RNA sequence: GGGAACGACUCGAGUAGAGUCGAAAAUCUUUUUUCUUUUCUGCUCAGGAGGUCAGGUGUGAACCACAGGAACCACGAGUUUAGUUCCGAGGAACCAACUGCGGUUCCAAGGGCUAAACGCCCUCGCCCCGAAGCAAGUAAGAUAGAGAAAAAGCGGGAUCAUUUCAAGGUUCGCCUUGAAAUGAUCAAAAGAAACAACAACAACAAC
Reactivity to 2A3 in 0.01 (KOAc 150mM, MgCl2 10mM, bicine 150mM(pH8.5), 24C), signal-to-noise 1, nucleotides 027 to 156: u050c000u000u130u030u030u010u020c000u030u100u060u020c030u020g000c010u080c120a100g020g020a190g030g050u050c020a000g010g010u050g020u020g140a080a070c030c010a000c040a060g000g010a040a030c000c000a010c020g060a050g000u000u010u010a040g010u300u200c000c000g000a040g000g020a010a000c000c010a010a160c200u240g200c230g030g000u000u020c010c010a000a010g020g000g000c000u030a010a000a000c020g030c020c000c000u030c020g000c020c000c000c000g030a020a020g000c020a020a010g010u030a030a000g010a080u120a030g040a000g030a000a070a000a010a000g190c140g000g030
An RNA of 207 nucleotides, treated with 2A3 and read out base by base. Values cover nucleotides 27 to 156. The reactions ran in a buffer of 150 mM KOAc, 10 mM MgCl2 and 150 mM bicine (pH 8.5), at 24 C. The data come from the RNA Mapping Database (RMDB), library VIROID.